Structure probing data (DMS and 2A3) for a 177-nucleotide construct. For DMS the reverse transcriptase was MarathonRT. The DMS profile rests on 1,766 reads. The 2A3 profile rests on 1,066 reads. The RNA was probed in 150 mM KOAc, 10 mM MgCl2 and 150 mM bicine (pH 8.5) at 24 C. It was measured as part of the RMDB library M2PK90.
RNA sequence: GGGAACGACUCGAGUAGAGUCGAAAAGUAGUGCUCGAGAGGGAGGCUGUCUCGCAGAGCUAUUAGAUCUUCUGAUCUUUCCCUCCUCCAUAUCGCUUAUGCGUCAAGCGAUAGACGCAUAAUUAAAAAGUACCAUCACUUUCGAGUGAUGGUACUUAAAAGAAACAACAACAACAAC
Reactivity to DMS in 0.01 (KOAc 150mM, MgCl2 10mM, bicine 150mM(pH8.5), 24C), signal-to-noise 2, nucleotides 027 to 126: g040u000a010g020u000g010c010u000c000g000a100g000a210g030g020g030a050g010g040c060u000g010u000c030u000c010g020c190a080g000a090g010c020u010a020u000u000a020g000a040u000c010u000u010c300u000g000a000u000c000u020u000u000c010c000c000u000c040c030u000c000c020a080u000a060u010c100g030c290u000u000a020u000g000c000g020u010c000a070a110g010c190g000a070u000a010g020a010c030g010c010a010u000a010a030u010u000a030a020a050
Reactivity to 2A3 in 0.01 (KOAc 150mM, MgCl2 10mM, bicine 150mM(pH8.5), 24C), signal-to-noise 1, nucleotides 027 to 126: g030u040a000g000u040g060c010u010c020g070a060g010a010g080g010g030a020g130g000c030u070g160u140c020u000c030g050c100a020g000a010g080c020u010a020u020u060a000g020a000u020c010u230u000c180u300g000a000u000c000u030u030u010c000c000c000u020c010c000u000c000c020a040u050a060u070c050g030c030u030u010a000u010g000c000g020u000c000a070a110g130c050g280a170u100a040g000a000c010g000c020a000u010a000a020u070u120a060a100a050